About this RNA
Structure probing data (DMS and 2A3) for a 177-nucleotide construct. It was measured as part of the RMDB library OK2TST. 2A3 adducts were read by reverse transcription with SuperScript II with manganese. For DMS, 1,325 sequencing reads were counted.
RNA sequence: GGGAACGACUCGAGUAGAGUCGAAAACAAGGCCAUGCCCCGCAUGGCCGGGUAAAAGCGGAGCCGCCGGCGACUUCCUUAUUCCGGCGAGUGCAGAGGACACGCCGCAUGACCUCCAGACCACCCGCGGUUAAUACCCAUUCGUGGGUAUUAACCGAAAAGAAACAACAACAACAAC
Reactivity to DMS in 0.01 (KOAc 150mM, MgCl2 10mM, bicine 150mM(pH8.5), 24C), signal-to-noise 2, nucleotides 027 to 126: c090a060a130g020g000c000c000a010u000g010c010c110c130c190g020c050a010u000g010g000c030c000g010g010g040u000a020a030a190a150g020c080g000g010a170g000c160c030g000c030c010g010g010c140g000a030c110u000u000c010c020u000u000a140u020u020c010c030g010g000c010g020a150g010u010g000c060a050g000a080g020g010a180c160a070c020g020c030c060g020c050a110u000g000a080c050c010u000c020c060a080g000a080c080c080a110c050c010c040g010
Reactivity to 2A3 in 0.01 (KOAc 150mM, MgCl2 10mM, bicine 150mM(pH8.5), 24C), signal-to-noise 1, nucleotides 027 to 126: c000a000a110g020g000c030c010a010u020g000c220c160c070c170g000c020a030u010g000g000c020c010g000g030g000u150a170a170a000a000g030c030g000g120a010g040c040c050g020c000c020g040g000c040g020a070c040u180u090c000c010u120u120a070u120u040c020c020g020g030c000g000a010g010u040g000c070a030g020a060g120g030a030c000a010c060g020c050c020g000c010a000u030g080a080c010c000u060c020c030a030g040a070c020c050a060c000c000c000g040